The record gives the reactivity of an RNA of 307 nucleotides to DMS. The RNA was probed in 150 mM KOAc, 10 mM MgCl2 and 150 mM bicine (pH 8.5) at 24 C.

RNA sequence: GGGAACGACUCGAGUAGAGUCGAAAAAGCGCUGCGGCUAUACGUAGCCGCAGCGCAAUUUGGCGCCAUUCUCCAAUCAGUCCUUCCCGGCGCGCGCCACCAUCGCCAGGGUCAGGCAGGCGUCAGCUCGGUUUCCACCUCUCUACUCCCCAUGGCCAUGCUCGCCCAAAGCGCGAUGGCGCCGGAUUGCGCGGGAGCUGGCGUAGACAUGAUGCCAGAGCGUUAACAAAAGGAGGAACACUACGACGUGUACGCACGUCGUAGUGACAUUUAAUUUCGAUUAAAUGAAAAGAAACAACAACAACAAC
Reactivity to DMS in 0.01 (KOAc 150mM, MgCl2 10mM, bicine 150mM(pH8.5), 24C), signal-to-noise 1, nucleotides 027 to 266: a230g000c030g150c000u000g090c060g100g150c000u010a050u010a070c110g030u020a050g090c020c020g300c000a040g140c000g090c010a000a010u000u020u040g000g020c050g000c080c200a090u040u020c060u030c030c140a170a130u010c140a050g000u030c030c070u000u000c070c010c000g000g000c050g040c210g030c060g000c000c030a130c070c040a070u000c030g040c030c020a120g000g000g020u010c080a060g020g000c030a090g010g030c030g000u010c050a060g000c060u000c050g000g030u000u010u000c010c060a110c020c010u000c040u000c030u020a150c110u000c040c010c030c120a110u030g000g000c000c030a030u000g010c040u000c260g000c000c010c020a030a170a080g000c120g030c050g020a040u000g000g010c080g000c040c000g000g010a130u010u000g010c000g060c040g000g020g020a160g050c190u000g000g030c020g020u000a030g010a120c120a070u020g000a100u010g000c020c020a020g000a140g000c060g010u000u020a040a090c100a020a100a080a100g030g000a080g000g010a080a150c010a040c010u020a000c000g000a000c000g000u000g090u010a090c160g010c000a000c000g000u010c000g000u010a000g030u000g020a070